Structure probing data (2A3 and DMS) for a 177-nucleotide construct. Reactivities are rounded to 0.1 and cut off at 0 and 3. The DMS profile rests on 19,454 reads. 2A3 adducts were read by reverse transcription with SuperScript II with manganese.

RNA sequence: GGGAACGACUCGAGUAGAGUCGAAAAAUCUGAGGAAACUGAGGCUCAGAGAGGCUACUGGUCUCCCACAAUGUCACACAGCUCAUAAGUGGCAAAGCUGGCUUGAUGGGCUACUUGUUCCUCUGAACUAAAUAUUACGUUUCGACGUAAUAUUUAGAAAAGAAACAACAACAACAAC
Reactivity to 2A3 in 0.01 (KOAc 150mM, MgCl2 10mM, bicine 150mM(pH8.5), 24C), signal-to-noise 8, nucleotides 027 to 126: a010u040c020u030g010a010g000g040a100a070a060c060u070g030a050g090g000c010u000c030a010g030a010g000a010g070g000c040u080a050c090u300g060g000u010c020u010c020c010c000a010c010a020a100u080g000u010c000a010c010a020c030a070g060c040u040c140a140u120a300a060g030u070g040g000c000a050a030a030g050c090u020g050g000c020u080u090g050a110u030g120g000g000c000u040a050c050u070u080g020u020u020c000c010u010c020u030g010a030a010
Reactivity to DMS in 0.01 (KOAc 150mM, MgCl2 10mM, bicine 150mM(pH8.5), 24C), signal-to-noise 9, nucleotides 027 to 126: a100u010c030u010g000a030g010g000a050a050a090c120u000g010a220g010g010c000u000c020a050g010a160g010a060g010g000c030u000a070c200u010g010g010u000c030u000c020c010c010a120c090a070a100u010g010u000c020a030c050a130c180a120g000c100u010c100a140u010a110a120g010u000g010g000c020a040a050a170g010c190u010g000g010c090u000u010g010a150u000g000g000g000c030u000a070c080u000u000g000u000u000c010c010u000c020u000g010a080a200